[RMDB]
Notes:
The data come from the RNA Mapping Database (RMDB), library OK1LIB. The record gives the reactivity of an RNA of 177 nucleotides to DMS and 2A3. DMS adducts were read by reverse transcription with MarathonRT. 2A3 adducts were read by reverse transcription with SuperScript II with manganese. The reactions ran in a buffer of 150 mM KOAc, 10 mM MgCl2 and 150 mM bicine (pH 8.5), at 24 C.

RNA sequence: GGGAACGACUCGAGUAGAGUCGAAAAGAAAAACGAAAGGAAGAGGAACUUCUUCGUUCCAAAUGGCUGCUUACAUGAACAGCAAUGUGCAGUGUGUCAACAACUCUCUUCUUUGAAGACUGAGCAACCGUACUGCUAUAUUCGUAUAGCAGUACGGAAAAGAAACAACAACAACAAC
Reactivity to DMS in 0.01 (KOAc 150mM, MgCl2 10mM, bicine 150mM(pH8.5), 24C), signal-to-noise 4, nucleotides 027 to 126: g050a080a070a080a030a060c080g000a050a040a070g030g010a010a000g000a200g000g010a120a100c070u000u000c070u010u000c060g000u000u020c000c000a040a110a090u020g020g000c020u000g010c020u030u030a070c120a070u020g010a090a080c130a040g010c070a100a070u010g000u030g000c090a030g000u000g030u000g000u010c080a080a120c160a070a110c080u020c020u000c010u000u000c000u030u000u020g000a040a030g000a060c130u050g010a070g010c120a080a150
Reactivity to 2A3 in 0.01 (KOAc 150mM, MgCl2 10mM, bicine 150mM(pH8.5), 24C), signal-to-noise 6, nucleotides 027 to 126: g030a000a050a000a000a000c040g050a060a020a020g070g020a010a010g050a070g070g130a060a060c010u050u010c000u050u020c020g010u030u030c020c000a030a090a050u130g090g000c000u000g000c000u090u080a020c000a030u080g060a180a030c040a090g100c050a060a070u060g010u010g020c010a010g020u020g010u050g060u160c040a040a030c000a040a070c100u000c000u000c020u080u000c000u060u100u200g070a070a030g050a040c140u120g010a010g060c050a050a020